[RMDB]
RNA sequence: GGGAACGACUCGAGUAGAGUCGAAAAACCUUCCGGCGAGAGGAAGGAAACCAGAAGAAAGGAAGGAUGAAAAUCCUGUUUCUGCUGGGAUUACUCCUGUCUCAACCAGGAAUGAUCCGAAGCCCCCGACCUCGACUUCCUCCAGGUUUCCCCGGGGACCUAAUUGGAAGUUCGCUUCCAAUUAGGUAAAAGAAACAACAACAACAAC
Reactivity to 2A3 in 0.01 (KOAc 150mM, MgCl2 10mM, bicine 150mM(pH8.5), 24C), signal-to-noise 2, nucleotides 027 to 156: a010c010c010u020u000c030c020g070g020c070g090a160g000a020g040g000a060a030g030g000a040a040a030c030c000a040g030a070a000g040a010a060a020g100g140a070a050g020g010a010u060g110a090a080a030a010u020c010c010u010g030u010u020u000c010u040g000c010u030g040g010g000a000u020u030a020c020u010c000c000u050g060u080c080u070c210a040a150c040c020a010g000g030a030a030u050g010a010u000c030c070g110a100a040g080c000c040c010c000c060g070a080c020c010u020c010g030a040c020u060u050c010c000u010c020c020a000g040g000u040u060u050c000c020c010c010g010g000g000g000
Reactivity to DMS in 0.01 (KOAc 150mM, MgCl2 10mM, bicine 150mM(pH8.5), 24C), signal-to-noise 2, nucleotides 027 to 156: a100c010c030u000u000c020c000g030g030c110g010a190g010a300g010g000a180a080g030g000a030a090a060c030c030a050g020a010a030g000a060a040a210g010g010a130a030g000g010a010u000g010a130a080a160a130u000c010c010u000g000u000u010u000c040u000g020c010u020g020g000g000a060u000u000a100c050u000c000c020u010g010u000c100u000c190a150a150c300c000a070g010g000a070a050u010g010a050u020c080c010g000a180a170g010c040c020c020c060c010g010a130c040c010u020c020g030a150c030u000u000c040c000u020c010c060a060g010g000u010u000u010c010c000c010c010g010g020g040g000

Structure probing data (2A3 and DMS) for a 207-nucleotide construct. The RNA was probed in 150 mM KOAc, 10 mM MgCl2 and 150 mM bicine (pH 8.5) at 24 C. It was measured as part of the RMDB library VIROID.